[RMDB]
RNA sequence: GGGAACGACUCGAGUAGAGUCGAAAAGAUAUGGAGCCCACAGGGAGUCGAAUAUCGGAAACGAUAUGAACGACGAGGAUCUGUGUGGCUCCUAAGUCAAAGCAGACCCACUUCGGUGGGUCUGCAAGAUUACACAACACUUCGGUGUUGUGUAAUCAAAAGAAACAACAACAACAAC
Reactivity to 2A3 in 0.01 (KOAc 150mM, MgCl2 10mM, bicine 150mM(pH8.5), 24C), signal-to-noise 2, nucleotides 027 to 126: g000a000u000a010u040g010g000a010g010c000c020c000a000c020a000g040g010g010a030g020u000c000g030a070a000u010a000u020c000g010g000a000a000a010c010g000a000u000a000u050g100a300a150c040g010a000c020g050a190g050g000a010u000c000u010g010u020g050u220g030g020c000u000c000c020u010a000a000g010u010c020a090a010a000g000c010a010g000a020c030c010c010a020c010u080u110c190g080g000u020g000g100g000u000c000u010g000c000a000a000
Reactivity to DMS in 0.01 (KOAc 150mM, MgCl2 10mM, bicine 150mM(pH8.5), 24C), signal-to-noise 2, nucleotides 027 to 126: g010a010u000a050u000g010g010a020g030c020c010c010a020c010a000g020g000g000a020g030u000c000g030a300a020u000a000u000c000g000g000a000a010a030c000g010a010u000a000u000g000a150a300c070g010a000c010g020a060g020g010a010u000c010u000g000u010g010u020g050g010c010u010c000c000u000a000a050g000u000c010a080a130a180g000c000a000g000a010c020c000c000a030c000u000u010c230g020g030u000g000g030g030u000c000u000g000c000a010a020